This 177-nucleotide RNA was probed chemically with DMS and 2A3. Conditions: 150 mM KOAc, 10 mM MgCl2 and 150 mM bicine (pH 8.5), 24 C. Values cover nucleotides 27 to 126. Values are in units of 0.01, from 0 to 300, in steps of 10. For DMS the reverse transcriptase was MarathonRT. For DMS, 825 sequencing reads were counted.
[RMDB]
RNA sequence: GGGAACGACUCGAGUAGAGUCGAAAACCAAGUUCAGUUAACAGACAAAUACUGCAGUGUUAAUGUAGUAGCUUGGCUUUACGCAGCAAUACUUAAUGGUUGCGCUUGGUUUGUAAAACCUAAUCGCCUCCUUGUUCCUCUUCGGAGGAACAAGGAGAAAAGAAACAACAACAACAAC
Reactivity to DMS in 0.01 (KOAc 150mM, MgCl2 10mM, bicine 150mM(pH8.5), 24C), signal-to-noise 1, nucleotides 027 to 126: c000c000a020a070g000u000u010c240a110g000u010u020a000a040c130a050g000a070c010a010a010a030u000a030c010u000g010c000a010g000u000g030u000u030a110a170u000g000u000a000g000u000a010g000c180u000u000g000g010c000u000u000u010a000c050g030c100a040g030c000a040a010u000a050c170u010u010a170a150u000g020g010u000u010g000c050g010c010u000u000g020g000u000u000u000g000u010a040a040a090a140c000c010u000a060a100u020c220g030c090
Reactivity to 2A3 in 0.01 (KOAc 150mM, MgCl2 10mM, bicine 150mM(pH8.5), 24C), signal-to-noise 2, nucleotides 027 to 126: c010c000a000a000g000u050u060c090a060g010u110u030a030a030c020a050g020a000c000a020a020a000u010a000c000u020g010c000a020g020u030g060u300u270a170a110u030g010u000a010g000u000a010g000c150u010u000g010g020c000u010u050u000a040c050g030c060a010g030c000a040a010u080a280c050u090u300a150a070u280g040g000u000u000g010c000g010c000u000u000g010g010u020u000u000g040u020a030a050a010a020c000c000u020a050a080u040c030g070c040
DMS (dimethyl sulfate) methylates the pairing face of unpaired adenines and cytosines.